[RMDB]
RNA sequence: GGGAACGACUCGAGUAGAGUCGAAAACGCAUGCGAAAGCAUGCGGCUAUGCUAAUGCAUGGCGACCGCGAUCAGGUAGAGUAGGCGGCGAUAGUGGUUAUUAUUCCGCUAUCGAUUACCAGUGUCUGUUAUUAUUCAGAUACAUGGACCUCUACAAGCUACUCAUAUGCUUCGGCAUAUGAGUAGCAAAAGAAACAACAACAACAAC
Reactivity to 2A3 in 0.01 (KOAc 150mM, MgCl2 10mM, bicine 150mM(pH8.5), 24C), signal-to-noise 4, nucleotides 027 to 156: c010g010c010a000u000g010c030g060a070a020a010g000c000a010u000g000c020g000g010c010u000a000u000g000c030u220a300a110u300g000c000a000u000g010g000c020g080a080c000c000g000c030g040a090u230c110a080g000g110u000a010g000a010g030u140a110g040g110c020g000g010c000g010a000u000a000g010u010g050g040u120u020a110u220u040a130u300u030c010c000g000c010u000a000u000c000g000a010u000u070a020c000c000a000g000u000g000u000c000u010g080u050u040a220u250u060a160u160u110c000a000g000a010u000a000c020a080u050g010g020a060c000c000u020c000u000a010c010a020a020
Reactivity to DMS in 0.01 (KOAc 150mM, MgCl2 10mM, bicine 150mM(pH8.5), 24C), signal-to-noise 1, nucleotides 027 to 156: c050g040c010a000u020g040c020g040a260a130a300g000c010a010u000g010c000g000g000c040u000a050u070g030c000u000a120a150u000g010c010a030u000g020g000c010g020a230c060c040g000c030g020a100u000c150a120g000g020u000a030g020a030g000u010a240g000g040c190g000g010c020g010a020u000a010g030u020g010g080u000u000a130u010u000a300u000u010c020c000g000c000u000a000u000c000g000a160u010u020a030c040c010a130g030u000g050u010c000u000g000u000u010a130u010u000a280u000u000c010a000g000a040u000a020c010a130u000g000g030a170c110c010u000c010u020a020c030a050a300

Conditions: 150 mM KOAc, 10 mM MgCl2 and 150 mM bicine (pH 8.5), 24 C.
The record gives the reactivity of an RNA of 207 nucleotides to 2A3 and DMS.
Reactivities are rounded to 0.1 and cut off at 0 and 3.
The 2A3 profile rests on 2,259 reads.